Annotation:
This 207-nucleotide RNA was probed chemically with DMS and 2A3. High DMS reactivity at an A or C suggests that its Watson-Crick edge is free. Conditions: 150 mM KOAc, 10 mM MgCl2 and 150 mM bicine (pH 8.5), 24 C. The 2A3 profile rests on 712 reads. 2A3 adducts were read by reverse transcription with SuperScript II with manganese. The DMS profile rests on 1,650 reads.

[RMDB]
RNA sequence: GGGAACGACUCGAGUAGAGUCGAAAAACUUUGAGCAAGUCACACUGAAAUGAGAAAACACCUACCUGUAGGACUGUUUGGAGCAAUGAAUGAUAUGACAAAUGUAAAGCCAUUCGGACAGUACGUAGCUCGAAGCACAUUCGGCAAGGGCUGGUGAUAUUCGGGAGAUGUUCGCAUCUCCCGAAUAAAAAGAAACAACAACAACAAC
Reactivity to DMS in 0.01 (KOAc 150mM, MgCl2 10mM, bicine 150mM(pH8.5), 24C), signal-to-noise 1, nucleotides 027 to 156: a040c030u000u030u000g030a120g050c040a070a110g010u000c010a080c070a170c010u070g000a020a080a070u000g010a130g000a150a020a060a080c020a060c000c010u000a070c000c070u040g060u000a130g040g010a060c020u000g000u000u010u000g020g000a120g060c050a090a080u000g010a090a140u020g000a030u000a040u040g000a050c080a030a100a040u000g020u000a050a100a110g010c000c030a120u000u000c090g020g010a210c010a130g010u020a040c070g000u000a220g010c010u010c010g000a050a020g020c070a090c020a140u000u000c030g050g000c080a100a140g010g010g030c010u000g030g010u000g000a180
Reactivity to 2A3 in 0.01 (KOAc 150mM, MgCl2 10mM, bicine 150mM(pH8.5), 24C), signal-to-noise 2, nucleotides 027 to 156: a000c020u040u030u000g020a000g000c020a030a030g000u110c030a030c000a010c080u060g060a060a030a130u150g000a050g050a060a160a010a030c030a040c030c000u050a010c010c030u180g050u080a070g050g000a010c030u000g080u060u040u070g010g000a070g020c070a080a110u120g030a070a130u110g080a050u100a040u130g120a030c060a080a200a040u240g030u130a050a100a000g010c000c000a040u040u060c020g030g010a010c010a010g020u040a040c010g030u090a020g040c010u040c130g020a020a000g000c020a000c010a200u080u080c020g020g000c010a030a040g010g030g000c000u020g020g000u030g020a000